The record gives the reactivity of an RNA of 177 nucleotides to DMS and 2A3.
RNA sequence: GGGAACGACUCGAGUAGAGUCGAAAACGCGACAGGACGGAAAGACCCCAUGGAGCUUUACUGUAGCUUGAUAUUGGAUGUUGGUACCGUUUGUACAGGAUAGGUAGGAGCCUUGGAAGCCGGAGCGCUUCACAUGCAGGUUCGCCUGCAUGUGAAGAAAAGAAACAACAACAACAAC
Reactivity to DMS in 0.01 (KOAc 150mM, MgCl2 10mM, bicine 150mM(pH8.5), 24C), signal-to-noise 3, nucleotides 027 to 126: c090g010c050g000a070c070a110g010g000a060c050g010g020a030a110a140g000a100c040c090c000c030a070u010g000g000a080g010c030u010u000u010a120c190u010g010u000a040g010c020u000u000g020a110u000a100u010u000g010g010a050u000g010u000u000g000g020u000a100c050c040g010u000u000u010g000u010a080c130a080g000g010a070u000a040g020g010u000a060g010g000a100g010c020c030u010u000g000g000a070a060g010c020c040g010g020a170g000c140g010
Reactivity to 2A3 in 0.01 (KOAc 150mM, MgCl2 10mM, bicine 150mM(pH8.5), 24C), signal-to-noise 2, nucleotides 027 to 126: c020g010c010g020a030c010a060g030g100a000c000g000g030a160a010a040g020a010c010c000c020c010a010u090g100g010a040g010c000u100u200u150a120c090u210g050u110a010g010c000u030u050g120a130u200a080u230u090g070g000a070u090g040u070u040g050g050u060a060c010c000g000u000u080u130g050u020a020c040a030g050g090a090u060a050g010g000u010a020g090g050a020g000c000c010u060u060g050g020a060a020g040c000c020g050g060a070g000c050g000